[RMDB]
RNA sequence: GGGAACGACUCGAGUAGAGUCGAAAAGAAGAACCUCGAGGCAACGGAGUGGAUGCAGGCAGUGCGCUUCGGCGUGCCGCAGCCGGCGCGCUACCGGCGCCCCGAUGCGGCACUCAAAGACGCGGGGCGGCGUCAUAGUAUUCGUACUAUGACGCCGAAAAGAAACAACAACAACAAC
Reactivity to DMS in 0.01 (KOAc 150mM, MgCl2 10mM, bicine 150mM(pH8.5), 24C), signal-to-noise 1, nucleotides 027 to 126: g000a200a130g000a160a030c050c010u000c040g060a080g000g010c010a090a060c160g000g000a110g040u010g010g000a010u010g090c000a090g010g000c060a200g030u010g000c000g020c010u000u000c060g030g010c110g140u000g000c000c000g110c010a100g000c140c060g050g000c300g000c030g080c030u000a110c230c130g000g030c000g020c030c110c090c000g080a100u040g000c030g000g070c000a080c000u000c080a000a090a060g030a030c070g000c000g000g000g020g030
Reactivity to 2A3 in 0.01 (KOAc 150mM, MgCl2 10mM, bicine 150mM(pH8.5), 24C), signal-to-noise 2, nucleotides 027 to 126: g170a030a010g020a040a030c020c000u020c010g050a050g060g000c000a030a050c060g070g000a050g040u090g040g080a120u100g050c040a020g100g010c030a020g050u010g050c030g000c030u080u080c080g030g030c040g020u020g000c070c010g000c000a020g070c120c030g000g040c030g050c020g000c020u080a090c040c120g010g000c000g000c000c030c010c000g000a010u050g000c000g000g000c000a010c000u010c000a070a030a020g060a060c050g000c010g000g000g020g000